Structure probing data (2A3 and DMS) for a 207-nucleotide construct. DMS adducts were read by reverse transcription with MarathonRT. The DMS profile rests on 2,126 reads. Values cover nucleotides 27 to 156. The 2A3 profile rests on 927 reads.

RNA sequence: GGGAACGACUCGAGUAGAGUCGAAAAGUAAUCAAAGAGGAUGAAUUGCGCAAAAUCGGACUUGAUCGCAUCGUUGCCGCGUGGGAUGAUUCCCCUACUGUUAUUGCGCACUUGCGUAGUUUAGGCAUCACCACUUACCAAGUAUGCGACUACGGCGCUUCCUUAGGCGGUUCGCCGCCUAAGGAAGAAAAGAAACAACAACAACAAC
Reactivity to 2A3 in 0.01 (KOAc 150mM, MgCl2 10mM, bicine 150mM(pH8.5), 24C), signal-to-noise 2, nucleotides 027 to 156: g030u050a040a040u060c040a050a160a040g060a030g110g030a050u080g040a060a130u140u130g000c040g040c050a020a080a060a030u110c040g030g000a010c000u020u030g020a020u150c030g000c060a010u050c050g050u030u090g090c020c000g060c040g080u120g000g030g000a020u060g040a060u210u170c010c000c000c030u020a070c050u010g100u140u080a090u130u080g000c020g000c000a020c070u100u190g020c010g000u000a060g000u040u080u100a060g050g030c000a050u010c030a030c050c000a050c000u100u060a050c000c030a090a000g060u030a010u090g020c000g000a000c020u020a020c050g020g000c050g000
Reactivity to DMS in 0.01 (KOAc 150mM, MgCl2 10mM, bicine 150mM(pH8.5), 24C), signal-to-noise 1, nucleotides 027 to 156: g000u000a070a090u030c060a100a050a070g000a230g000g010a100u010g000a090a050u000u000g040c000g000c160a090a030a090a100u010c050g010g000a120c070u000u000g020a170u000c030g020c000a050u000c040g030u000u000g010c030c040g020c240g000u020g010g030g030a060u000g000a190u000u000c060c000c030c000u000a090c130u000g000u000u000a060u000u000g000c020g000c020a100c090u010u000g020c030g000u000a010g000u000u000u000a090g040g030c020a060u000c090a100c020c040a120c050u000u040a080c110c050a040a040g020u000a080u000g000c000g000a030c000u000a020c090g020g020c100g030